[RMDB]
RNA sequence: GGGAACGACUCGAGUAGAGUCGAAAAUGUUGCUUUGCACAUCAGUGACUAUUAAGGAACACCAUUUUUUCCUUCUUACUCAAAAACAUUAUGGUGACAAAUUUUCCCGUUAUUAGCGAAUUCAGUCAUAAGCUAUAGAUGCUUAAGCAUUGGGAAACCCUUCUGUCUUCUUCGGAAGACAGAAGGGAAAAGAAACAACAACAACAAC
Reactivity to 2A3 in 0.01 (KOAc 150mM, MgCl2 10mM, bicine 150mM(pH8.5), 24C), signal-to-noise 1, nucleotides 027 to 156: u190g010u000u010g060c020u010u060u140g100c040a000c000a010u120c030a010g010u000g080a050c050u070a010u210u120a020a070g020g010a140a080c010a010c060c000a050u040u000u000u000u070u030c070c020u140u160c090u100u200a120c060u070c080a050a000a100a100a000c010a070u080u090a010u120g000g000u030g000a020c030a050a040a010u020u070u090u000c000c000c000g020u010u110a120u080u110a080g020c030g010a020a060u150u260c040a060g040u000c010a030u010a090a060g010c040u020a000u020a100g060a030u050g000c000u020u060a050a020g050c040a020u050u080g000g000g000a010a000a010